Conditions: 150 mM KOAc, 10 mM MgCl2 and 150 mM bicine (pH 8.5), 24 C. Structure probing data (2A3 and DMS) for a 177-nucleotide construct. The 2A3 profile rests on 6,191 reads. The DMS profile rests on 2,420 reads. Reactivities are given for positions 27 through 126. For 2A3 the reverse transcriptase was SuperScript II with manganese. The data come from the RNA Mapping Database (RMDB), library TTRDEL.
RNA sequence: GGGAACGACUCGAGUAGAGUCGAAAAGAUAUGGAUGCUUUAGCUAUGAAGCCCAUCACAGUCGGAAACGAUCACAGUGGGUGGAGCUAGAGCAUCCUAAGUCAAAACCCAAUCUUCGGAUUGGGAACUGAUAGUGAAUCUUCGGAUUCACUAUCAGAAAAGAAACAACAACAACAAC
Reactivity to 2A3 in 0.01 (KOAc 150mM, MgCl2 10mM, bicine 150mM(pH8.5), 24C), signal-to-noise 3, nucleotides 027 to 126: g020a010u070a030u100g000g000a010u000g000c010u010u010u000a020g000c000u040a300u300g030a070a010g000c000c000c000a030u160c030a040c070a040g050u020c020g040g000a040a040a060c010g000a010u110c030a030c020a130g020u020g000g030g000u020g040g040a010g000c010u000a010g000a000g020c000a000u000c000c000u000a000a000g000u010c030a000a030a120a190c000c010c000a000a000u000c010u050u090c300g190g000a000u010u010g010g000g030a020a090
Reactivity to DMS in 0.01 (KOAc 150mM, MgCl2 10mM, bicine 150mM(pH8.5), 24C), signal-to-noise 4, nucleotides 027 to 126: g010a040u000a300u020g000g000a010u000g000c000u000u000u000a000g010c020u000a250u010g000a150a300g000c000c000c010a020u000c050a140c300a300g010u000c000g030g010a090a070a130c010g010a030u000c070a100c300a220g000u000g000g010g000u010g000g000a010g010c000u020a010g010a020g000c000a000u000c000c000u000a010a060g000u010c050a070a070a100a140c000c000c000a010a000u000c000u000u030c230g000g010a010u000u000g000g000g000a010a050